[RMDB]
RNA sequence: GGGAACGACUCGAGUAGAGUCGAAAAGAAUAAUAUUCCAUUGUAUGGACAUAGCAUAUUUUGUCUACUCAUUCACAUGUUAAUGGACAUUUAGGUUGUCUCCAAUUUUUCCAACUGGGCUAUUAUGAGUGAGACAGAUAAGAAAAUUCCUGUGCAACCCAUUUAGUCACUUCGGUGACUAAAUGGGAAAAGAAACAACAACAACAAC
Reactivity to 2A3 in 0.01 (KOAc 150mM, MgCl2 10mM, bicine 150mM(pH8.5), 24C), signal-to-noise 1, nucleotides 027 to 156: g020a000a190u200a060a000u040a060u110u010c030c030a060u020u170g070u210a030u070g000g040a010c010a070u070a000g040c000a060u000a020u140u110u200u000g010u000c010u010a030c000u000c000a000u020u040c010a000c040a140u110g060u140u230a180a070u030g000g000a010c000a070u010u020u050a170g040g000u080u020g050u070c070u020c060c000a010a060u100u040u100u130u060c100c050a080a060c110u030g110g090g000c000u060a040u230u000a030u160g000a000g040u040g000a030g000a010c000a000g060a030u060a030a100g010a120a110a000a000u070u070c060c020u080g000u140g100c000a080a100
Overview: The data come from the RNA Mapping Database (RMDB), library OK3TST. An RNA of 207 nucleotides, treated with 2A3 and read out base by base. For 2A3 the reverse transcriptase was SuperScript II with manganese. The RNA was probed in 150 mM KOAc, 10 mM MgCl2 and 150 mM bicine (pH 8.5) at 24 C. The 2A3 profile rests on 329 reads. Reactivities are given for positions 27 through 156.